RNA sequence: GGGAACGACUCGAGUAGAGUCGAAAAGCCAUGCGAUGGAGAUCGGCUUCCUUGACGAUCGCGGCCCGGGUCAUGAUGCAUCCCUUGAUUUCGCGAAGCCUCGGCUUUUGAUCUUGGCCCUCGACUUAGGGUAGAUCCCGAGGUGCUUCUUCCGGACUGCUAAAGUUUGUUUCGACAAACUUUAGCAAAAAGAAACAACAACAACAAC
Reactivity to 2A3 in 0.01 (KOAc 150mM, MgCl2 10mM, bicine 150mM(pH8.5), 24C), signal-to-noise 2, nucleotides 027 to 156: g020c010c010a020u030g000c020g050a050u090g010g040a080g020a130u050c000g080g000c090u110u100c020c020u100u060g060a030c030g020a030u000c040g000c050g070g100c050c000c000g050g000g040u230c010a050u040g070a060u100g020c000a060u050c000c010c000u010u060g110a110u040u080u100c030g020c030g000a040a020g000c000c000u000c020g050g030c110u180u240u150u240g000a000u000c000u070u020g160g030c000c010c000u080c060g270a240c140u140u300a000g000g000g000u000a000g000a000u020c000c000c030g000a010g000g010u020g000c000u050u110c000u090u020c000c000g070g050a010c010
Reactivity to DMS in 0.01 (KOAc 150mM, MgCl2 10mM, bicine 150mM(pH8.5), 24C), signal-to-noise 2, nucleotides 027 to 156: g010c010c010a060u000g000c070g010a100u000g010g000a300g040a060u000c000g020g020c010u010u010c150c070u000u000g020a080c040g000a070u000c040g000c100g000g050c000c010c030g010g030g050u000c020a100u000g020a140u000g000c040a140u010c020c030c020u030u000g010a090u000u000u000c060g000c050g010a110a300g030c010c010u000c090g000g010c130u000u010u010u010g010a050u000c030u000u010g060g020c000c000c000u000c060g020a160c130u010u000a090g010g040g040u000a060g010a050u000c010c040c010g030a070g010g000u010g010c000u000u000c050u000u000c060c030g030g000a300c130